[RMDB]
RNA sequence: GGGAACGACUCGAGUAGAGUCGAAAAGACGUUCUUCGUGUUAUUGACGGUAAUUGUCGUCAGGAAAUUUAUUAGUCGUAACACAUACCCUUUGAGGGAAAUCCAUCUGUGAUGUAACUCCGUUAUUGUUAUAAUGAAGGACUUUGUCACGGUCGUAAAUUCUUGUCCGAUUCGUCGGACAAGAAUUAAAAGAAACAACAACAACAAC
Reactivity to DMS in 0.01 (KOAc 150mM, MgCl2 10mM, bicine 150mM(pH8.5), 24C), signal-to-noise 1, nucleotides 027 to 156: g020a110c090g020u000u000c090u010u000c110g040u010g000u010u010a020u000u000g050a080c010g020g030u000a040a010u000u010g010u000c030g030u010c270a210g010g000a020a020a030u000u000u010a010u020u010a060g050u010c000g040u000a030a040c000a010c000a280u000a140c020c010c000u000u000u030g030a230g020g040g010a030a100a110u000c010c000a100u010c090u000g030u010g000a030u010g030u000a050a080c000u000c020c030g030u000u000a010u000u000g000u010u000a090u010a020a020u000g010a030a030g000g000a130c070u010u000u000g020u000c010a050c020g010g020u010c060g040u000a060
Reactivity to 2A3 in 0.01 (KOAc 150mM, MgCl2 10mM, bicine 150mM(pH8.5), 24C), signal-to-noise 3, nucleotides 027 to 156: g070a020c080g020u060u040c030u070u120c090g000u060g010u010u010a040u030u300g020a000c000g000g010u010a020a050u050u110g210u140c050g030u130c130a080g170g100a050a040a020u090u130u020a060u020u130a130g020u000c000g010u030a040a000c000a000c000a060u080a280c000c060c000u060u160u230g140a220g060g060g020a080a100a030u070c080c020a050u040c070u100g020u050g000a020u010g120u100a080a030c030u020c000c000g030u040u000a030u040u050g080u110u160a110u040a150a070u090g100a070a020g060g000a010c000u040u030u100g050u010c040a030c020g000g040u040c050g050u080a020